Structure probing data (DMS and 2A3) for a 170-nucleotide construct.
The RNA was probed in 150 mM KOAc, 10 mM MgCl2 and 150 mM bicine (pH 8.5) at 24 C.
For DMS the reverse transcriptase was MarathonRT.
[RMDB]
RNA sequence: GGGAACGACUCGAGUAGAGUCGAAAAAGUACAACAUUCAUGCUGUAUUAGACACACUACUUGCUUCUUCUAGUCUUAGAACCUUUGUUGUAGAUAAGUCUUUGUCAAUUGAGGAGUUUGCUGACGUUAAGGCCGGAGUUCGCUCCGGCCAAAAGAAACAACAACAACAAC
Reactivity to DMS in 0.01 (KOAc 150mM, MgCl2 10mM, bicine 150mM(pH8.5), 24C), signal-to-noise 4, nucleotides 027 to 129: a000g070u010a120c050a000a040c100a070u050u080c240a070u000g060c040u000g000u040a050u020u020a130g010a250c200a120c060a250c060u000a030c000u010u050g000c050u000u000c020u050u040c010u000a150g020u060c030u000u000a030g110a130a130c020c000u000u010u070g000u050u030g050u000a030g000a080u070a020a070g070u000c040u010u010u010g000u060c030a040a110u000u150g000a150g010g070a000g030u000u040u010g000c010u000g020a110c060g000u000u080a030a070
Reactivity to 2A3 in 0.01 (KOAc 150mM, MgCl2 10mM, bicine 150mM(pH8.5), 24C), signal-to-noise 2, nucleotides 027 to 129: a000g010u010a000c000a000a000c000a000u000u070c130a120u110g000c040u000g030u060a030u030u170a070g000a000c000a000c000a000c000u020a020c000u060u080g030c000u030u080c000u100u000c080u020a010g070u000c000u010u010a000g020a030a010c000c000u160u040u000g050u100u120g000u000a020g030a090u110a150a000g030u030c000u080u060u000g090u070c000a020a190u010u100g030a000g000g020a030g120u020u000u040g100c000u010g000a050c050g000u090u070a000a000